Overview
An RNA of 177 nucleotides, treated with DMS and 2A3 and read out base by base. The reactions ran in a buffer of 150 mM KOAc, 10 mM MgCl2 and 150 mM bicine (pH 8.5), at 24 C. DMS adducts were read by reverse transcription with MarathonRT. Reactivities are given for positions 27 through 126. It was measured as part of the RMDB library OK1LIB.

RNA sequence: GGGAACGACUCGAGUAGAGUCGAAAAGCGCAAAGCCGCCAGUUUGAUGACUCUCCGGCCCAUCUGUCUCUUCUUCGCGCCGACCACACCGGGCUUGAGGCUCUCUUUCCGCGCCACAGAGCCGAUGGCCACUCUGUUAGUUCGCUAACAGAGUGGCAAAAGAAACAACAACAACAAC
Reactivity to DMS in 0.01 (KOAc 150mM, MgCl2 10mM, bicine 150mM(pH8.5), 24C), signal-to-noise 3, nucleotides 027 to 126: g020c060g000c040a020a090a140g020c030c010g000c070c040a080g000u000u020u010g000a170u030g000a070c020u010c060u010c100c040g000g000c010c010c070a120u000c030u010g000u020c020u000c020u000u050c020u000u000c150g000c070g030c000c010g010a210c030c020a080c060a090c060c070g010g000g040c040u010u000g020a200g000g020c000u010c000u010c090u010u000u010c040c030g000c110g050c010c030a030c170a090g000a100g000c000c040g010a080u050g000
Reactivity to 2A3 in 0.01 (KOAc 150mM, MgCl2 10mM, bicine 150mM(pH8.5), 24C), signal-to-noise 5, nucleotides 027 to 126: g050c060g000c040a090a090a040g030c030c010g010c010c010a030g030u050u110u160g150a160u130g030a050c010u000c000u010c070c020g030g000c010c020c000a060u040c030u070g080u020c020u010c000u160u020c000u050u050c030g000c010g000c040c000g030a040c000c040a040c000a010c020c050g070g020g000c000u010u050g050a050g010g020c000u010c000u010c000u060u070u020c030c020g020c020g020c020c000a070c010a030g020a010g010c000c030g040a070u100g090